[RMDB]
RNA sequence: GGGAACGACUCGAGUAGAGUCGAAAAGAUAUUUGCGAAUAAUAAGUGGUAUUCCAUUAUAACCAUCGACAAUAAGCAGUUUCCUAUUCCAUCAAACUGUAUAGGUAUGUCCUCUGCCAAGUACAUAAAUUCUAGCAUCGAUCAAGAUACUUUAAUAGCUUCUGACACUUUUCGAAGUGUCAGAAGCAAAAGAAACAACAACAACAAC
Reactivity to 2A3 in 0.01 (KOAc 150mM, MgCl2 10mM, bicine 150mM(pH8.5), 24C), signal-to-noise 1, nucleotides 027 to 156: g010a000u000a030u150u100u070g030c010g000a040a040u060a010a060u010a080a000g030u010g030g000u060a110u300u100c000c020a030u060u000a130u070a090a110c040c030a020u050c020g000a000c090a110a000u030a090a000g040c010a000g000u040u030u010c000c000u040a090u040u120c070c040a100u170c070a030a060a060c000u030g000u060a030u000a190g040g000u010a030u060g100u030c020c020u040c030u030g000c030c000a110a000g010u040a060c000a090u140a050a050a020u020u040c100u130a000g030c000a060u110c020g230a060u100c060a000a110g000a130u060a070c000u020u000u070a100a080u080a110